This 207-nucleotide RNA was probed chemically with 2A3 and DMS.
RNA sequence: GGGAACGACUCGAGUAGAGUCGAAAAUAACACUGGCGGCUGCGUAUCACUCUAGGGUACGUGAUAGUGCGAUAUAAGAAGCACUGGUACAUGCCGGCAGUGACAGUUAAGAGAUGGCCGCAGUCUCAAAAGGGGUCAUUCUUCGGAAUGACCCCAAUCGUACAUACAGGUUCGCCUGUAUGUACGAAAAAGAAACAACAACAACAAC
Reactivity to 2A3 in 0.01 (KOAc 150mM, MgCl2 10mM, bicine 150mM(pH8.5), 24C), signal-to-noise 2, nucleotides 027 to 156: u080a010a020c000a000c040u110g150g030c000g020g000c020u010g030c020g010u020a020u000c050a090c170u090c130u140a080g110g000g000u000a000c010g000u030g050a030u070a060g000u000g050c030g000a000u060a020u110a300a030g250a030a060g000c000a000c010u020g030g000u080a060c050a010u100g000c000c000g020g000c000a000g000u000g000a000c050a020g060u030u100a080a000g010a000g000a000u040g040g030c030c000g110c060a000g030u000c000u010c010a010a070a000a070g000g000g000g000u000c000a010u000u000c000u020u040c200g070g000a000a000u000g000a000c000c000c000c000a000a000
Reactivity to DMS in 0.01 (KOAc 150mM, MgCl2 10mM, bicine 150mM(pH8.5), 24C), signal-to-noise 2, nucleotides 027 to 156: u020a070a130c070a030c000u000g030g000c000g020g000c000u000g020c000g030u000a020u010c000a090c070u000c110u010a250g010g020g040u000a010c040g060u000g050a110u000a010g030u000g010c000g000a150u000a140u000a210a210g000a180a300g000c000a000c000u000g020g030u000a070c070a080u000g000c000c000g040g000c020a010g020u000g010a030c070a050g020u020u000a090a170g000a070g000a080u000g020g050c080c060g050c050a220g010u000c030u020c020a020a080a100a150g000g030g050g010u000c000a030u000u000c000u010u020c300g040g010a020a000u000g000a040c000c000c010c000a000a000